[RMDB]
RNA sequence: GGGAACGACUCGAGUAGAGUCGAAAAGUGAGGCUGACACCCUGCGCCUGAUCGGCAUGCAUGGGGGCGCACGGGUUACGGUGCCCAAGACACCCAAGGCGGAACACCCACUGCGCAUGGCACUCAGUGAAGAGGCCUUUAACCUCCUGGUGCAGGAGCCACACAUAAACUUCGGUUUAUGUGUGGCAAAAGAAACAACAACAACAAC
Reactivity to 2A3 in 0.01 (KOAc 150mM, MgCl2 10mM, bicine 150mM(pH8.5), 24C), signal-to-noise 2, nucleotides 027 to 156: g080u010g000a110g030g020c020u030g020a040c010a030c090c000c000u000g030c010g010c000c000u070g000a180u040c060g030g020c070a080u160g020c060a090u080g080g070g000g000g010c030g000c010a000c150g000g000g000u080u070a020c040g000g010u050g000c040c060c000a040a100g060a010c080a030c000c100c000a010a040g020g000c000g000g020a090a070c010a050c000c000c050a050c020u020g000c050g040c100a090u090g130g000c020a030c130u100c050a090g030u080g150a160a020g000a050g030g030c020c000u000u080u040a080a070c010c000u010c000c020u040g010g020u050g060c000a020g000g050a030
Structure probing data (2A3) for a 207-nucleotide construct. It was measured as part of the RMDB library OK3TST. The RNA was probed in 150 mM KOAc, 10 mM MgCl2 and 150 mM bicine (pH 8.5) at 24 C. High 2A3 reactivity points to a flexible backbone, as in loops and unpaired stretches.